Chemical mapping of a 177-nucleotide RNA with DMS and 2A3. The RNA was probed in 150 mM KOAc, 10 mM MgCl2 and 150 mM bicine (pH 8.5) at 24 C. The 2A3 profile rests on 1,007 reads.
[RMDB]
RNA sequence: GGGAACGACUCGAGUAGAGUCGAAAAGGCAGUUAUGAGACGUAUAUUUUGUAACCGGGGUAGAAUACCGGUGAUUGACUGGAGGGCAAGUCUGGUGCCAGCAGCCGCGGUAAUUCCAGCUCCAGGAUAGAACCUAAGCAUUCGUGCUUAGGUUCUAAAAAGAAACAACAACAACAAC
Reactivity to DMS in 0.01 (KOAc 150mM, MgCl2 10mM, bicine 150mM(pH8.5), 24C), signal-to-noise 4, nucleotides 027 to 126: g000g000c010a080g020u010u020a060u020g000a110g010a080c090g000u000a090u030a070u030u000u010u000g020u010a130a040c000c010g040g010g010g010u020a100g020a120a090u060a060c020c010g000g000u000g000a060u040u030g000a090c030u000g000g010a040g000g000g000c080a060a080g000u020c020u010g010g030u010g020c030c030a060g030c030a110g000c060c070g000c060g020g010u000a050a110u050u000c000c000a050g000c010u020c000c020a050g000g000a220
Reactivity to 2A3 in 0.01 (KOAc 150mM, MgCl2 10mM, bicine 150mM(pH8.5), 24C), signal-to-noise 1, nucleotides 027 to 126: g020g030c040a000g010u090u110a210u240g050a110g080a040c030g090u040a040u000a080u200u160u060u170g100u010a020a000c000c000g000g000g000g020u090a090g100a230a040u080a100c000c000g010g010u020g020a020u040u160g020a020c000u000g000g030a020g030g040g070c120a070a010g010u010c040u010g000g000u080g000c000c020a060g000c000a020g040c010c140g010c000g000g000u090a100a140u140u010c010c000a030g000c010u010c010c000a010g000g000a000